[RMDB]
RNA sequence: GGGAACGACUCGAGUAGAGUCGAAAAGUGGAUAGUUUCGACUAUCCACACAACUGAUGAUCUUACAGUGGAGGAUGAAGAAGAUGGCCAUCGGAUCGUCAAAUAGCACAGAGUUCGCUCUGUGCAAUGUCUAACCACAGUUCGCUGUGGUUAGACAAAAAGAAACAACAACAACAAC
Reactivity to DMS in 0.01 (KOAc 150mM, MgCl2 10mM, bicine 150mM(pH8.5), 24C), signal-to-noise 2, nucleotides 027 to 126: g020u020g020g000a000u000a000g000u010u000u000c270g050a020c010u010a000u000c000c000a000c010a040c180a060a060c120u000g000a040u000g000a050u000c000u000u000a140c250a090g030u000g010g010a050g010g000a170u000g000a030a070g000a100a060g000a200u010g010g010c010c020a020u000c130g010g000a000u000c030g000u000c060a010a070a060u000a110g000c000a000c000a000g030a020g010u010u020c230g030c010u000c010u000g010u000g000c010a030a010
Reactivity to 2A3 in 0.01 (KOAc 150mM, MgCl2 10mM, bicine 150mM(pH8.5), 24C), signal-to-noise 3, nucleotides 027 to 126: g000u010g000g000a010u010a000g010u000u030u090c170g000a000c010u000a000u000c030c010a000c000a000c000a000a020c030u040g000a010u000g000a000u020c010u030u170a090c070a150g000u030g050g040a020g070g020a060u150g070a070a180g060a050a020g070a080u160g090g030c010c000a040u060c030g000g000a000u010c010g010u000c010a020a010a110u210a060g000c000a000c010a010g000a000g000u070u040c110g060c090u000c000u000g000u000g000c000a000a000